[RMDB]
RNA sequence: GGGAACGACUCGAGUAGAGUCGAAAAGGGGUCACGUCACCCUUCCCGCAGAUAUAUACACUAAGGCUCACUGAAGCCUCCACGGUGAGCCCAUGAUGUAUAUGUAGGGAAGACAAGUCGUGACGGAGGCACCCAAACCAGCUGUUCGCAGCUGGAAUACGUAAUCGAGUUUCGACUCGAUUACGUAAAAAGAAACAACAACAACAAC
Reactivity to DMS in 0.01 (KOAc 150mM, MgCl2 10mM, bicine 150mM(pH8.5), 24C), signal-to-noise 2, nucleotides 027 to 156: g020g000g030g020u000c000a030c020g020u000c050a070c080c060c000u000u000c000c000c010g000c220a080g020a040u000a000u000a000u000a010c000a010c020u000a220a080g000g000c000u000c000a040c040u000g000a040a100g010c010c010u000c020c030a300c000g010g000u000g000a040g040c000c020c010a080u010g010a050u000g030u000a050u000a000u010g010u000a130g060g010g040a020a030g030a130c070a060a180g000u000c070g000u000g020a060c000g040g020a030g020g060c010a110c010c020c010a020a110a190c010c010a030g030c000u000g010u010u000c280g100c010a010g010c010u000g060g000a100a150
Reactivity to 2A3 in 0.01 (KOAc 150mM, MgCl2 10mM, bicine 150mM(pH8.5), 24C), signal-to-noise 3, nucleotides 027 to 156: g080g010g010g000u000c000a010c010g000u000c020a050c010c020c000u000u000c020c010c010g050c210a010g050a010u050a010u010a000u010a020c010a000c030u060a100a070g010g010c000u000c000a000c010u020g070a140a030g060c030c000u020c020c000a030c010g000g020u000g010a000g000c000c000c000a050u110g020a150u020g000u010a000u020a000u010g020u060a060g030g020g000a000a000g020a040c070a220a260g030u090c030g000u020g010a010c030g010g000a050g020g000c000a140c020c010c030a040a040a060c000c000a000g020c000u040g050u070u100c270g000c120a000g000c000u000g020g000a010a030